[RMDB]
RNA sequence: GGGAACGACUCGAGUAGAGUCGAAAAGCGCGUGAGGGCGGUGACGAUUCUUUCUUGUAAAACAAAAUGAGGUCGUUGGGGGAGUGUCCAGGCUCACCGUCGUUUUGUUUAGGAACGGUCUGUGCGCCGAGGCAAUAACAUUCGUGUUAUUGCCUCGAAAAGAAACAACAACAACAAC
Reactivity to 2A3 in 0.01 (KOAc 150mM, MgCl2 10mM, bicine 150mM(pH8.5), 24C), signal-to-noise 1, nucleotides 027 to 126: g020c030g010c010g010u040g100a050g030g040g000c010g020g020u050g020a010c010g000a020u120u030c000u030u080u010c010u000u080g010u050a000a030a050a010c020a000a040a010a030u080g000a010g050g000u030c000g010u040u040g030g000g000g000g000a060g020u070g050u050c030c020a020g020g000c010u000c020a000c000c000g050u030c000g000u010u000u020u010g070u030u110u130a030g000g000a030a000c010g000g040u000c000u000g020u030g000c000g000c000
Reactivity to DMS in 0.01 (KOAc 150mM, MgCl2 10mM, bicine 150mM(pH8.5), 24C), signal-to-noise 3, nucleotides 027 to 126: g010c030g020c040g010u000g010a080g000g010g020c050g000g010u000g000a110c030g010a040u000u000c030u000u000u000c060u000u000g000u020a080a060a080a260c060a030a020a050a040u000g000a070g020g000u000c060g010u000u010g020g000g000g000g000a080g010u000g010u000c070c110a140g010g010c020u000c020a030c020c080g010u000c010g000u000u000u000u000g000u000u000u000a100g000g010a040a010c040g010g000u000c010u000g020u000g010c100g000c050
An RNA of 177 nucleotides, treated with 2A3 and DMS and read out base by base. For 2A3, 1,835 sequencing reads were counted. The DMS profile rests on 4,572 reads.